[RMDB]
RNA sequence: GGGAACGACUCGAGUAGAGUCGAAAAUUCUCGAUGGGCAACUGGACUUCCGCGGACAACUGGCGGUGCGCAGCCACCUGCUCAUGUGCGGGCAUUGCCGGCGCUUCAUCCGCCAGAUGCGCCUGACGUUAUUAUCCAGGUUCGCCUGGAUAAUAACAAAAGAAACAACAACAACAAC
Reactivity to 2A3 in 0.01 (KOAc 150mM, MgCl2 10mM, bicine 150mM(pH8.5), 24C), signal-to-noise 3, nucleotides 027 to 126: u040u000c010u020c030g040a140u140g010g020g030c040a080a060c060u050g040g040a040c020u140u000c030c050g060c050g030g020a040c000a090a050c060u020g010g000c010g000g020u030g000c010g000c010a010g000c010c000a020c010c010u030g030c000u030c070a160u200g110u110g120c080g000g020g020c040a070u020u190g050c040c020g120g000c000g020c000u180u140c050a080u030c000c000g000c000c000a010g000a010u030g010c090g040c010c010u030g020a000c050
Reactivity to DMS in 0.01 (KOAc 150mM, MgCl2 10mM, bicine 150mM(pH8.5), 24C), signal-to-noise 4, nucleotides 027 to 126: u000u000c000u000c000g010a100u010g010g000g020c040a070a050c060u000g000g000a130c070u000u000c060c060g020c040g020g000a100c060a060a120c030u000g010g000c010g010g010u010g010c300g020c040a170g020c090c220a090c030c050u000g010c000u000c220a120u010g010u000g010c040g000g000g010c180a060u010u000g010c080c060g000g010c010g020c020u010u030c130a060u010c000c000g020c000c010a020g000a030u000g010c090g020c040c010u000g020a130c200